[RMDB]
RNA sequence: GGGAACGACUCGAGUAGAGUCGAAAAGAUAUGGAAUACGAGCUUUUGACGGCUCAGUCGGAAACGACGAGCCGAUAAGCUCAGUAUUCCUAAGUCAAACCGGAAAGAACUUCGGUUCUUUCCGGAAGGAAUAAAUGAACUUCGGUUCAUUUAUUCCAAAAGAAACAACAACAACAAC
Reactivity to 2A3 in 0.01 (KOAc 150mM, MgCl2 10mM, bicine 150mM(pH8.5), 24C), signal-to-noise 3, nucleotides 027 to 126: g020a000u030a010u120g000g000a000a020u010a000c010g000a010g050c040u180u300u300u300g300a080c010g000g000c000u000c080a030g000u010c010g000g000a060a020a030c000g000a010c000g000a000g010c030c000g050a080u070a080a000g000c000u000c010a010g000u000a000u000u000c000c000u020a050a000g020u010c040a060a070a100c010c010g000g000a000a010a000g000a010a000c010u100u150c300g100g000u010u000c000u000u000u000c010c000g010g000a010a020
Reactivity to DMS in 0.01 (KOAc 150mM, MgCl2 10mM, bicine 150mM(pH8.5), 24C), signal-to-noise 2, nucleotides 027 to 126: g010a020u000a220u010g000g010a040a000u000a020c000g000a010g000c000u000u000u010u010g000a220c100g000g020c010u000c000a070g060u000c010g010g000a030a060a120c000g020a020c000g010a020g000c010c000g020a010u010a030a020g010c000u000c000a050g030u000a000u010u000c000c000u000a010a080g010u000c030a090a140a210c000c020g020g000a010a000a010g010a010a000c000u000u020c160g040g000u000u000c000u000u000u000c000c000g000g000a010a030
An RNA of 177 nucleotides, treated with 2A3 and DMS and read out base by base. Conditions: 150 mM KOAc, 10 mM MgCl2 and 150 mM bicine (pH 8.5), 24 C. For 2A3, 5,418 sequencing reads were counted.